[RMDB]
RNA sequence: GGGAACGACUCGAGUAGAGUCGAAAAGAUAAGGAGUGCGAAAGCAAUCACUCUGUACACUGAGAUUGCAAGCACUCUGUAUCAGCGGUAGAGCAGUGGAAACACAAUGUACAGUAACCGACUGUGAGCAUAGAAGUACCUUCGGGUACUUCUAUGCAAAAGAAACAACAACAACAAC
Reactivity to DMS in 0.01 (KOAc 150mM, MgCl2 10mM, bicine 150mM(pH8.5), 24C), signal-to-noise 5, nucleotides 027 to 126: g000a040u020a070a150g000g020a010g020u000g010c000g010a050a160a130g000c000a000a010u000c040a110c060u010c130u020g020u010a070c210a100c190u010g000a090g000a030u010u010g000c000a100a300g020c000a000c010u020c000u000g000u010a020u000c000a040g000c030g020g000u000a090g010a110g020c080a070g010u000g000g000a060a090a080c100a040c070a070a000u040g010u000a080c030a060g010u020a060a070c020c010g010a260c000u000g010u000g000a150
Reactivity to 2A3 in 0.01 (KOAc 150mM, MgCl2 10mM, bicine 150mM(pH8.5), 24C), signal-to-noise 2, nucleotides 027 to 126: g060a030u140a090a120g030g000a000g010u000g000c000g040a150a030a040g000c000a010a000u000c020a190c020u000c030u020g080u100a060c240a030c140u050g000a000g000a030u000u000g000c000a030a000g000c020a000c000u000c000u000g000u000a010u030c020a010g000c000g000g010u070a030g000a000g080c000a010g000u000g010g000a000a060a000c030a000c020a020a000u130g060u090a020c050a070g040u020a010a000c000c000g090a050c040u000g010u020g070a000
Conditions: 150 mM KOAc, 10 mM MgCl2 and 150 mM bicine (pH 8.5), 24 C. Structure probing data (DMS and 2A3) for a 177-nucleotide construct. For DMS, 7,521 sequencing reads were counted. For 2A3 the reverse transcriptase was SuperScript II with manganese.